[RMDB]
Structure probing data (2A3 and DMS) for a 177-nucleotide construct.
RNA sequence: GGGAACGACUCGAGUAGAGUCGAAAAGUCCCCUCUUUGGGGCCCCAGCUUCAGUGCAGGCAAGGGGUUUCGACCCCUUGCCGUACUGACGCCCGAAUCCUGAUUCCUUGCGAAUCCGUGUUCGGGGUUAAAUUUACCUAUUCGUAGGUAAAUUUAAAAAAGAAACAACAACAACAAC
Reactivity to 2A3 in 0.01 (KOAc 150mM, MgCl2 10mM, bicine 150mM(pH8.5), 24C), signal-to-noise 5, nucleotides 027 to 126: g090u110c010c010c040c010u080c070u080u150u140g000g000g000g000c010c000c000c010a020g030c010u020u020c000a000g000u000g010c050a090g100g000c010a000a010g030g020g030g020u000u110u070c170g060a080c000c000c000c000u000u000g000c000c000g000u000a000c000u000g000a000c000g110c000c000c010g010a010a010u070c000c000u000g000a000u010u040c000c040u150u300g040c080g080a000a000u000c000c010g010u010g000u020u000c000g000g000g000g010
Reactivity to DMS in 0.01 (KOAc 150mM, MgCl2 10mM, bicine 150mM(pH8.5), 24C), signal-to-noise 8, nucleotides 027 to 126: g000u030c000c000c010c020u010c300u010u030u010g020g010g010g000c050c000c010c020a190g010c130u000u010c000a000g010u000g000c000a110g040g000c000a020a010g000g010g010g010u000u000u030c170g010a060c000c000c000c000u000u000g010c000c000g010u000a000c000u000g000a030c300g000c000c010c000g000a010a010u000c130c010u000g000a010u000u000c000c020u030u010g020c100g000a020a010u000c000c080g010u000g000u000u000c000g000g010g010g000
Values cover nucleotides 27 to 126. For 2A3 the reverse transcriptase was SuperScript II with manganese. The reactions ran in a buffer of 150 mM KOAc, 10 mM MgCl2 and 150 mM bicine (pH 8.5), at 24 C.